About this RNA
Structure probing data (DMS) for a 177-nucleotide construct.
[RMDB]
RNA sequence: GGGAACGACUCGAGUAGAGUCGAAAAGCUUAGCAGUUCGCUGCUAAGCGACGUUGACGGCCCUCACCGUUGAGAAAUCCCAAUGAGGACAGGUGACUGACAGAUAUUAAGCGUUCGCGCUUAAUAAUAAUGGUCCUACGUUCGCGUAGGACCAUUAAAAAGAAACAACAACAACAAC
Reactivity to DMS in 0.01 (KOAc 150mM, MgCl2 10mM, bicine 150mM(pH8.5), 24C), signal-to-noise 2, nucleotides 027 to 126: g010c000u000u000a020g010c000a000g000u000u030c220g030c000u000g000c000u000a000a000g020c000g010a000c250g020u000u000g000a020c000g020g020c090c010c020u010c040a180c040c040g010u000u000g000a050g000a120a080a060u000c000c000c030a140a050u000g000a010g010g010a300c080a070g000g000u000g020a090c090u010g020a110c260a050g000a140u000a010u000u000a000a030g010c000g000u000u000c210g040c010g010c020u000u000a010a000u000a010a140
Values cover nucleotides 27 to 126.
The RNA was probed in 150 mM KOAc, 10 mM MgCl2 and 150 mM bicine (pH 8.5) at 24 C.
DMS adducts were read by reverse transcription with MarathonRT.